The record gives the reactivity of an RNA of 177 nucleotides to 2A3. The data come from the RNA Mapping Database (RMDB), library OK1LIB. The RNA was probed in 150 mM KOAc, 10 mM MgCl2 and 150 mM bicine (pH 8.5) at 24 C.

RNA sequence: GGGAACGACUCGAGUAGAGUCGAAAAUGAUGCGUGUGCAUCCCGAAGAACCCCACUGGUAUCUGGCCGCCAUCGGCAGCGACCCGACGGUCCGCGGCCAGGGGUUCGGUCAGGUGCUGAUGCGGUCUACGCGGAACUGGUUCGCCAGUUCCGCGUAAAAAGAAACAACAACAACAAC
Reactivity to 2A3 in 0.01 (KOAc 150mM, MgCl2 10mM, bicine 150mM(pH8.5), 24C), signal-to-noise 1, nucleotides 027 to 126: u300g000a030u030g000c000g010u130g090u070g040c030a000u050c010c000c060g060a140a080g030a230a140c000c000c000c000a010c030u050g000g000u010a000u010c000u000g000g000c000c000g100c050c000a120u210c120g010g000c020a120g000c000g030a020c000c000c120g180a070c260g020g060u050c060c170g040c000g000g000c000c000a000g020g000g000g040u080u240c000g000g010u000c000a000g000g000u020g000c000u010g000a080u050g030c040g000g000u000c000